Source information: This 177-nucleotide RNA was probed chemically with DMS and 2A3. Conditions: 150 mM KOAc, 10 mM MgCl2 and 150 mM bicine (pH 8.5), 24 C. 2A3 adducts were read by reverse transcription with SuperScript II with manganese. The data come from the RNA Mapping Database (RMDB), libraries RFM100 and RFMREP. DMS adducts were read by reverse transcription with MarathonRT. Values cover nucleotides 27 to 126.
[RMDB]
RNA sequence: GGGAACGACUCGAGUAGAGUCGAAAACAUGAGGAGGGUGACUGAAGCCUGCUCGGUCAGAGCGAACCCGUAACAGCGAACAACAUCGUUCGUUUCUCCCGUCAAGCCGCCCCUGUGGCUGCCUGACAACUAUAUGUGGCUUCGGCCACAUAUAGUUAAAAGAAACAACAACAACAAC
Reactivity to DMS in 0.01 (KOAc 150mM, MgCl2 10mM, bicine 150mM(pH8.5), 24C), signal-to-noise 7, nucleotides 027 to 126: c100a090u010g020a090g010g010a090g010g000g010u010g000a090c080u020g000a080a150g010c040c010u000g000c030u010c030g000g020u010c090a120g000a080g020c030g010a080a070c010c010c000g000u030a080a110c170a070g010c030g000a040a030c070a110a110c230a120u040c130g000u000u000c040g020u010u010u000c040u010c030c030c050g000u000c010a010a050g010c000c090g010c010c000c030c220u030g000u050g000g000c010u000g000c020c030u000g000a030c030
Reactivity to 2A3 in 0.01 (KOAc 150mM, MgCl2 10mM, bicine 150mM(pH8.5), 24C), signal-to-noise 9, nucleotides 027 to 126: c060a080u150g030a040g060g060a050g000g000g010u050g060a040c050u080g060a080a010g030c000c000u020g030c010u020c030g030g070u270c090a020g000a010g050c020g020a050a070c010c000c000g020u040a060a020c030a040g020c010g010a020a010c020a030a030c020a170u160c100g010u010u010c000g000u000u070u000c030u010c000c020c010g000u010c000a010a000g000c010c020g020c000c030c010c080u180g130u260g040g000c000u000g000c000c000u010g000a010c000